An RNA of 177 nucleotides, treated with 2A3 and DMS and read out base by base. For DMS, 1,134 sequencing reads were counted. Values are in units of 0.01, from 0 to 300, in steps of 10. For 2A3 the reverse transcriptase was SuperScript II with manganese. Values cover nucleotides 27 to 126. It was measured as part of the RMDB library TTRDEL.

[RMDB]
RNA sequence: GGGAACGACUCGAGUAGAGUCGAAAAGAUAUGGAGUCACGUCGAAGAACUACCGUAACAUCACUCGGAAACGAGUGUGGGUAGGGAGACGAAGUCUCCUAAGUCAAAAGCACAGUUCGCUGUGCAACUGAUGUAGUGCCUUCGGGCACUACAUCAGAAAAGAAACAACAACAACAAC
Reactivity to 2A3 in 0.01 (KOAc 150mM, MgCl2 10mM, bicine 150mM(pH8.5), 24C), signal-to-noise 1, nucleotides 027 to 126: g010a030u120a020u140g030g010a010g000u030c020a030c110g000u010c010g110a220a050g030a090a040c000u000a000c030c000g130u210a100a100c060a170u300c020a000c000u010c000g010g040a080a070a050c010g000a010g000u030g000u010g060g000g000u000a000g020g020g000a040g000a020c000g040a090a010g020u000c000u000c000c000u040a100a000g030u030c050a020a000a070a150g000c010a020c030a020g020u110u180c270g080c070u030g000u000g020c020a010a000
Reactivity to DMS in 0.01 (KOAc 150mM, MgCl2 10mM, bicine 150mM(pH8.5), 24C), signal-to-noise 2, nucleotides 027 to 126: g020a060u000a300u010g000g000a030g030u000c080a190c040g030u010c000g000a090a080g000a140a270c010u000a010c000c000g030u000a070a170c150a060u000c010a000c010u000c010g000g010a060a040a130c010g020a000g010u010g040u000g040g010g000u000a000g010g000g000a130g000a020c010g000a090a090g020u010c000u000c000c000u020a040a080g000u020c030a040a060a190a100g030c000a050c020a010g010u000u000c230g040c040u000g010u000g000c000a020a050